[RMDB]
RNA sequence: GGGAACGACUCGAGUAGAGUCGAAAACAACAGCCUGGGUUAAAUAUGCACUUUCAUGGUGCUUUUAAUUUCAGGAACUUAUAGCUUGAGACAGGGACGGGGUAAUUUUAUUUGGUAGCGAGAGGUGGUAACACUGCCUAUUCGUAGGCAGUGUUACAAAAGAAACAACAACAACAAC
Reactivity to DMS in 0.01 (KOAc 150mM, MgCl2 10mM, bicine 150mM(pH8.5), 24C), signal-to-noise 3, nucleotides 027 to 126: c060a050a230c130a070g010c010c010u000g030g000g010u000u000a010a040a030u010a050u040g010c000a020c000u000u000u050c300a130u060g000g000u000g000c000u020u010u000u000a000a010u000u010u070c000a000g000g000a070a160c200u040u020a090u010a080g010c020u010u040g030a120g000a090c020a030g010g000g000a050c080g020g000g020g000u050a040a080u000u020u000u010a080u010u030u000g010g030u000a060g000c000g030a080g010a060g010g030u000g000
Reactivity to 2A3 in 0.01 (KOAc 150mM, MgCl2 10mM, bicine 150mM(pH8.5), 24C), signal-to-noise 4, nucleotides 027 to 126: c020a010a000c000a010g020c000c000u010g040g000g000u000u010a020a010a010u260a070u220g020c010a020c000u140u230u290c200a200u300g040g000u000g010c000u000u000u000u000a020a020u020u090u210c000a000g000g040a000a010c000u070u170a080u040a210g080c010u030u090g090a040g000a050c020a070g000g020g030a000c030g000g050g000g030u040a070a080u000u070u020u160a120u050u080u070g030g010u040a010g030c010g040a020g000a010g130g040u100g040